Chemical mapping of a 207-nucleotide RNA with 2A3.
Source: RMDB library OK3TST, as collected in RNAgym.
The RNA was probed in 150 mM KOAc, 10 mM MgCl2 and 150 mM bicine (pH 8.5) at 24 C.
For 2A3 the reverse transcriptase was SuperScript II with manganese.
[RMDB]
RNA sequence: GGGAACGACUCGAGUAGAGUCGAAAAGCGCUCCUGAACGUGACUUCAGAAGACGGGCGCCGACAAGUUAGAUUGUCAAGGCGACAGUGUAGUGACACUGGGUAAUCUAACUUACCAAUCGCCGGCGCGUUGAGUCACGUCAACAACCGUCGAGCGAGCACCACUAUCAGUUCGCUGAUAGUGGUGCAAAAGAAACAACAACAACAAC
Reactivity to 2A3 in 0.01 (KOAc 150mM, MgCl2 10mM, bicine 150mM(pH8.5), 24C), signal-to-noise 1, nucleotides 027 to 156: g060c060g020c010u020c070c030u040g030a030a000c000g020u010g010a030c000u100u050c230a090g030a270a000g070a050c060g060g050g010c020g020c020c010g000a010c000a040a000g000u010u000a000g000a010u000u040g050u070c070a150a070g260g070c080g030a020c000a000g000u000g060u120a250g190u180g210a030c000a000c020u050g000g000g060u020a000a020u000c010u010a010a010c000u000u010a040c020c030a030a060u030c100g020c000c000g020g020c010g000c000g050u000u140g020a000g020u010c050a020c080g010u000c110a000a040c020a040a090c020c010g030u030c010g010a010g010c010g020a000